Conditions: 150 mM KOAc, 10 mM MgCl2 and 150 mM bicine (pH 8.5), 24 C. This 177-nucleotide RNA was probed chemically with 2A3 and DMS. For DMS, 1,256 sequencing reads were counted. For 2A3, 758 sequencing reads were counted. The data come from the RNA Mapping Database (RMDB), library OK2TRN. Reactivities are given for positions 27 through 126.
RNA sequence: GGGAACGACUCGAGUAGAGUCGAAAACUGAUACUGUACGUAUAUUAACUUCCAUUUCAUUGGCAAUGAUAUUAGAUAAUGUUGUCUUACCUAAUCCAGGGGGGCCAAAAAGCAAUACAUGAUCUAACACGCAUACUAUCUUCGGAUAGUAUGCGUGAAAAGAAACAACAACAACAAC
Reactivity to 2A3 in 0.01 (KOAc 150mM, MgCl2 10mM, bicine 150mM(pH8.5), 24C), signal-to-noise 1, nucleotides 027 to 126: c000u010g020a020u050a110c040u110g130u170a090c060g030u020a030u020a070u010u140a090a030c150u070u000c000c030a060u090u210u150c070a070u020u190g060g000c030a030a090u070g110a010u050a080u060u050a060g050a060u080a150a040u080g090u080u090g030u060c000u020u110a190c020c060u070a030a010u030c000c000a010g000g000g020g000g000g030c000c060a000a140a060a030a000g000c010a010a010u030a110c070a050u160g040a010u010c000u000a020a050
Reactivity to DMS in 0.01 (KOAc 150mM, MgCl2 10mM, bicine 150mM(pH8.5), 24C), signal-to-noise 2, nucleotides 027 to 126: c060u020g010a070u020a020c080u010g040u000a080c140g010u010a050u000a070u000u010a100a160c150u000u000c010c010a120u000u000u000c110a050u000u010g010g000c090a070a150u000g000a050u000a020u000u020a080g010a090u000a090a030u000g000u000u010g010u000c030u000u000a030c030c030u010a100a070u000c120c090a110g010g020g000g040g010g000c070c090a020a020a050a090a050g000c110a060a060u000a020c090a090u000g000a070u000c020u000a020a080